[RMDB]
RNA sequence: GGGAACGACUCGAGUAGAGUCGAAAAACACUUGGAAGCAAGCCUUAAUAUCUCUGAGUAAGAGAAAUUUUUCCGCUCCACGUGUGAACGAGAAAAUGGAUAUCCUAGCAACGGCUGAGCGAUUGUGCCCGGAGAACUAUUUCGAUAGUUCUCCGGGAAAAGAAACAACAACAACAAC
Reactivity to DMS in 0.01 (KOAc 150mM, MgCl2 10mM, bicine 150mM(pH8.5), 24C), signal-to-noise 1, nucleotides 027 to 126: a040c030a030c040u010u010g010g000a160a150g000c040a040a120g020c040c000u000u000a010a030u000a090u000c000u010c000u000g010a220g010u010a240a060g010a010g000a000a090a060u000u050u000u000u000c090c120g000c040u000c000c010a050c090g010u000g000u010g000a070a110c050g000a140g010a050a040a090a100u030g010g000a090u010a070u000c020c020u000a120g010c070a140a060c120g020g030c060u000g010a120g030c030g000a090u000u010g000u010g030